[RMDB]
RNA sequence: GGGAACGACUCGAGUAGAGUCGAAAAUAUGCUCAAUUAAGGAACAUAGCUAGUUCGACAUACCAUACUACCCUUUUUAAAACUAUCCUAUAUGUUUGAUGCUAGCAUAGCGUAAUUUUGUGUUCUCCAUUGGACGAGAGUUCGCUCUCGUCCAAUGAAAAGAAACAACAACAACAAC
Reactivity to DMS in 0.01 (KOAc 150mM, MgCl2 10mM, bicine 150mM(pH8.5), 24C), signal-to-noise 4, nucleotides 027 to 126: u040a020u020g000c000u010c110a050a080u030u030a100a130g030g000a070a080c110a080u000a100g010c020u000a030g010u000u010c000g010a020c010a030u010a060c170c110a080u010a070c090u010a080c030c020c020u000u000u000u030u020a060a070a080a060c140u030a040u000c020c050u000a120u000a020u000g000u000u000u030g020a040u050g020c050u000a020g000c010a080u020a040g020c040g000u020a000a070u030u030u020u000g030u000g010u000u000c030u010c040
Reactivity to 2A3 in 0.01 (KOAc 150mM, MgCl2 10mM, bicine 150mM(pH8.5), 24C), signal-to-noise 7, nucleotides 027 to 126: u070a020u030g010c020u020c080a070a190u210u210a130a070g160g010a050a060c060a130u110a060g000c000u000a010g010u000u010c020g010a000c000a010u030a040c050c030a040u040a100c030u090a100c020c000c000u090u070u040u060u140a080a150a030a040c030u070a070u140c020c030u090a060u000a010u130g090u020u050u290g050a050u110g010c010u000a010g000c020a060u060a020g020c040g020u040a070a230u010u040u030u070g130u020g020u020u010c010u000c010